[RMDB]
RNA sequence: GGGAACGACUCGAGUAGAGUCGAAAAAUGUUUUGCUGGUGGACUGGACUGCAGACAACGAAGAUUGGAGUCACCCCAAGGAACUACUUCUAGACAGUUCAGUGCUACCCUACCAUGAACCCAGAUCAUAAAACUGUGUCAGAAUUAGGAUAGCUGAAAAAUGGGUAGUGUUCGCACUACCCAUUUUAAAAGAAACAACAACAACAAC
Reactivity to 2A3 in 0.01 (KOAc 150mM, MgCl2 10mM, bicine 150mM(pH8.5), 24C), signal-to-noise 1, nucleotides 027 to 156: a000u120g010u060u010u000u100g020c040u020g030g000u030g090g000a000c060u040g020g040a050c040u070g060c070a040g030a260c060a110a020c060g030a060a000g040a090u130u300g000g070a020g090u110c040a120c000c030c000c000a050a000g090g000a070a070c000u040a010c000u040u060c000u010a030g030a270c000a000g000u000u010c000a000g000u000g050c000u020a010c000c000c000u030a060c000c090a020u070g020a010a010c000c070c000a000g080a080u110c090a060u260a110a200a050a060c110u040g030u050g060u090c000a040g010a130a060u050u060a040g040g040a030u130a020g110c190u220g150a000
Reactivity to DMS in 0.01 (KOAc 150mM, MgCl2 10mM, bicine 150mM(pH8.5), 24C), signal-to-noise 1, nucleotides 027 to 156: a160u010g030u000u000u010u000g000c000u000g010g050u000g020g000a090c000u010g000g010a010c010u010g030c000a130g020a220c280a060a150c130g020a100a090g010a170u000u000g070g010a040g000u010c020a210c010c030c030c060a090a120g010g000a010a120c030u000a060c060u000u000c040u000a210g000a090c000a030g010u000u000c000a120g010u010g010c000u000a030c020c030c010u000a050c030c040a300u010g010a050a090c040c040c010a100g030a090u010c130a140u000a090a120a050a150c060u000g000u000g000u010c000a060g030a090a140u000u000a030g000g000a050u000a030g000c010u000g000a020